[RMDB]
RNA sequence: GGGAACGACUCGAGUAGAGUCGAAAAGAUUACGUGUCGUUGUGGAAUCGAUACUACGCACGAGAUUCCAAGGUCUCUGUAGUUCGUCCGCUGGUGACGUCUUUGGAGUCACGUUCGAUAUACGAAAGGUAUCUACUACCUUCGGGUAGUAGAUACCAAAAGAAACAACAACAACAAC
Reactivity to 2A3 in 0.01 (KOAc 150mM, MgCl2 10mM, bicine 150mM(pH8.5), 24C), signal-to-noise 2, nucleotides 027 to 126: g050a070u180u210a020c110g000u030g020u040c000g000u000u050g040u010g020g030a010a110u110c000g020a000u020a090c010u000a000c010g010c040a020c060g000a000g000a000u040u020c050c020a040a030g090g010u030c020u000c010u050g110u010a020g000u020u020c010g000u010c000c030g000c100u040g000g080u090g010a000c000g080u040c020u000u010u080g010g030a000g000u010c000a000c010g010u020u040c000g000a030u020a010u000a150c010g040a060a050a000
Reactivity to DMS in 0.01 (KOAc 150mM, MgCl2 10mM, bicine 150mM(pH8.5), 24C), signal-to-noise 2, nucleotides 027 to 126: g010a150u000u010a000c170g010u000g010u010c000g010u010u010g030u000g000g010a140a090u020c070g000a040u010a070c080u020a060c000g000c180a090c060g010a030g000a010u000u000c070c070a010a090g030g010u020c010u000c020u040g010u000a020g010u020u000c040g000u020c040c000g010c040u000g020g000u040g000a010c060g030u010c020u000u010u040g000g000a050g010u000c000a050c010g000u000u010c000g030a080u040a080u010a160c000g010a060a100a060